[RMDB]
RNA sequence: GGGAACGACUCGAGUAGAGUCGAAAAGGACUGGGCCGAGCACAACGUCCAGGUGUUACAUUUGAGUAUGAUCCACUCAUUGUGAGAUUUAUAAUUGAUGAAGAGCUUAAGUCGUGGAUAGGAAUGUAUGAAUGGAUGCUAGGAACUAGUAACUAUCGGUCCAGCAAAUAUUCGUAUUUGCUGGACCAAAAGAAACAACAACAACAAC
Reactivity to DMS in 0.01 (KOAc 150mM, MgCl2 10mM, bicine 150mM(pH8.5), 24C), signal-to-noise 1, nucleotides 027 to 156: g050g040a220c000u020g000g010g040c030c020g050a140g060c080a090c100a130a140c070g000u040c020c010a050g070g040u000g020u020u000a060c070a130u050u010u000g010a130g020u010a000u000g000a070u000c020c190a000c010u000c070a180u010u000g060u010g000a150g010a080u000u020u000a090u000a090a090u000u000g000a040u000g050a070a090g020a070g000c000u000u000a100a080g030u000c010g000u000g000g000a060u000a120g060g000a060a120u020g000u000a040u000g000a130a170u020g020g020a110u000g000c000u020a050g030g020a030a050c030u000a110g010u030a030a130c050u010a210u010c060
Reactivity to 2A3 in 0.01 (KOAc 150mM, MgCl2 10mM, bicine 150mM(pH8.5), 24C), signal-to-noise 2, nucleotides 027 to 156: g110g020a000c010u010g000g000g000c040c000g050a030g090c080a000c030a150a040c050g050u020c000c000a020g060g040u000g060u020u070a060c040a060u030u060u110g050a040g020u100a050u180g060a030u000c020c010a020c020u070c050a110u050u150g020u010g070a140g020a020u010u170u020a110u030a130a090u170u120g030a030u120g060a080a060g030a000g090c020u070u100a060a000g030u080c040g010u020g010g000a040u030a080g060g050a060a020u080g000u080a040u030g090a060a010u050g000g030a030u040g000c000u010a030g000g010a050a000c030u010a020g030u070a050a030c030u100a100u120c050